[RMDB]
RNA sequence: GGGAACGACUCGAGUAGAGUCGAAAAGGCCGCACGGAUUCCAGUGCAUAUCUUAGUGAUACUCCAGUUAACUCUAUACUUUCCCUGCAAUACGCUAUUCGCCUUAGAUGUAUCUGGGUGGCUGCUCACACAUCUUCGAGUUCGCUCGAAGAUGUGUAAAAGAAACAACAACAACAAC
Reactivity to DMS in 0.01 (KOAc 150mM, MgCl2 10mM, bicine 150mM(pH8.5), 24C), signal-to-noise 2, nucleotides 027 to 126: g010g020c060c060g000c020a080c030g000g010a130u000u020c070c050a050g000u020g010c040a080u010a140u020c020u020u050a070g040u000g020a040u010a080c070u030c020c050a050g020u000u020a100a080c040u010c060u000a120u000a040c060u010u000u000c030c000c010u020g000c060a080a100u040a060c030g020c040u000a050u000u010c100g000c040c060u020u010a060g020a020u020g000u010a040u020c050u010g020g000g020u040g000g010c060u000g000c080u000c070
Reactivity to 2A3 in 0.01 (KOAc 150mM, MgCl2 10mM, bicine 150mM(pH8.5), 24C), signal-to-noise 5, nucleotides 027 to 126: g040g000c010c000g010c000a010c020g060g020a060u110u050c020c010a010g010u020g040c020a020u020a060u090c040u030u090a050g010u040g110a020u030a090c020u020c020c020a040g010u000u060a080a070c030u000c040u040a050u040a170c050u010u080u050c000c000c000u000g020c020a020a070u070a120c050g020c030u050a060u070u100c020g020c010c010u090u050a050g000a100u110g030u100a030u030c010u020g010g000g010u020g030g000c020u030g000c010u030c020
The record gives the reactivity of an RNA of 177 nucleotides to DMS and 2A3. It was measured as part of the RMDB libraries RFM100 and RFMREP. Values cover nucleotides 27 to 126.